RNA sequence: GGGAACGACUCGAGUAGAGUCGAAAACAACUUUAAUAGUUAUGACGGUUUCCGACUCGGGAAAAUAGAUUCUUGCAUAACGACGGAAAUUUCAGAGUUUGUUCUGAAUGUCUCCAGUCGAUGUGCAGUAAGGUAUUAUGUUCGCAUAAUACCUUACAAAAGAAACAACAACAACAAC
Reactivity to 2A3 in 0.01 (KOAc 150mM, MgCl2 10mM, bicine 150mM(pH8.5), 24C), signal-to-noise 9, nucleotides 027 to 126: c010a010a010c010u110u160u290a260a170u290a160g020u040u060a050u140g050a020c030g010g040u050u240u050c040c060g060a050c020u010c030g000g000g030a030a070a070a070u140a060g140a200u040u020c010u020u040g000c000a010u010a070a030c000g000a000c000g000g030a010a040a060u020u020u010c000a000g010a040g070u100u240u290g160u220u000c000u000g000a000a010u040g040u030c040u000c050c040a060g000u000c000g030a040u020g000u000g000c020a000
Reactivity to DMS in 0.01 (KOAc 150mM, MgCl2 10mM, bicine 150mM(pH8.5), 24C), signal-to-noise 8, nucleotides 027 to 126: c070a020a020c020u000u010u030a130a110u020a040g010u000u000a040u000g010a300c050g010g000u000u010u010c040c080g010a040c020u000c020g010g000g000a080a050a060a100u020a090g010a170u000u000c010u000u000g010c000a010u000a040a070c000g010a010c010g000g000a010a070a100u000u000u010c000a000g000a030g010u020u020u020g010u020u000c000u000g010a010a010u000g000u010c150u000c000c010a120g020u000c010g000a030u010g020u000g010c000a080
Structure probing data (2A3 and DMS) for a 177-nucleotide construct. DMS adducts were read by reverse transcription with MarathonRT. As a SHAPE reagent, 2A3 marks flexible, mostly unpaired nucleotides at the ribose 2'-OH.